[RMDB]
RNA sequence: GGGAACGACUCGAGUAGAGUCGAAAAGAUGUGGGUUCGCCCACAUCAAAACCGAUGAGGAGCGUUAGCCACGCUGAAGAUGAUGACAAGAGGGUUAGCCGAGGAAAGCCCAUACUUCGGUAUGGGCGACCAAGAGGUUGUUCGCAACCUCUUGGUCAAAAGAAACAACAACAACAAC
Reactivity to DMS in 0.01 (KOAc 150mM, MgCl2 10mM, bicine 150mM(pH8.5), 24C), signal-to-noise 3, nucleotides 027 to 126: g000a010u010g020u000g010g000g010u010u010c260g010c000c000c000a020c010a000u000c000a040a030a130a140c030c010g010a080u010g010a110g000g000a060g000c060g010u010u010a110g000c080c090a100c040g000c030u010g010a090a060g000a090u000g010a080u000g010a070c050a050a060g020a100g000g000g000u000u010a060g020c020c020g000a100g010g000a080a090a180g000c000c000c000a020u000a000c000u000u020c150g010g000u000a010u000g000g000g010c010
Reactivity to 2A3 in 0.01 (KOAc 150mM, MgCl2 10mM, bicine 150mM(pH8.5), 24C), signal-to-noise 3, nucleotides 027 to 126: g010a000u000g000u000g020g010g050u030u060c170g110c020c000c020a000c000a010u000c000a000a000a000a040c030c010g030a100u100g040a060g090g040a040g030c040g030u040u060a020g050c030c010a040c040g020c040u050g020a040a050g050a120u140g010a020u070g030a020c020a070a040g000a040g080g030g040u060u060a020g040c020c010g040a040g010g120a140a080a010g020c010c000c000a000u000a010c000u030u060c180g020g000u000a000u010g000g000g000c010
Structure probing data (DMS and 2A3) for a 177-nucleotide construct. For DMS, 2,978 sequencing reads were counted. Conditions: 150 mM KOAc, 10 mM MgCl2 and 150 mM bicine (pH 8.5), 24 C. It was measured as part of the RMDB library RFMREP.